[RMDB]
RNA sequence: GGGAACGACUCGAGUAGAGUCGAAAAUGAUUCAGGCACAGCGCGAUUAUUUUGGUGCGCAUACUUACAAACGUACUGAUAAAGACGGUGUGUUCCAUACCGAGUGGAUGGAAUAAUCCAUUUAACGCAGCGAUUCGGAAUUCGUUCCGAAUCGCUGAAAAGAAACAACAACAACAAC
Reactivity to 2A3 in 0.01 (KOAc 150mM, MgCl2 10mM, bicine 150mM(pH8.5), 24C), signal-to-noise 1, nucleotides 027 to 126: u140g050a000u110u140c050a020g000g000c040a010c010a040g130c130g020c000g050a080u030u000a080u020u190u010u090g000g000u020g000c010g020c010a040u110a100c080u280u100a060c130a050a050a030c010g010u020a000c010u000g000a010u020a030a020a010g000a030c000g060g000u010g010u010g010u020u090c090c030a010u020a220c000c010g040a050g000u170g020g000a120u000g000g070a100a050u080a080a060u090c000c020a030u080u010u030a050a010c040g000
Reactivity to DMS in 0.01 (KOAc 150mM, MgCl2 10mM, bicine 150mM(pH8.5), 24C), signal-to-noise 1, nucleotides 027 to 126: u000g040a210u010u000c020a090g000g000c010a020c060a050g000c020g000c070g010a300u000u020a050u020u000u020u000g030g000u000g000c000g010c090a180u000a090c220u000u070a080c210a080a030a140c020g020u020a010c000u040g020a050u000a030a020a050g010a160c000g000g000u000g030u020g000u000u000c030c020a030u000a110c060c010g000a020g010u010g000g000a000u030g000g000a010a080u000a180a040u000c000c030a020u000u000u000a110a210c260g000

Overview:
The data come from the RNA Mapping Database (RMDB), library OK2TST. Chemical mapping of a 177-nucleotide RNA with 2A3 and DMS. For DMS, 568 sequencing reads were counted. DMS adducts were read by reverse transcription with MarathonRT.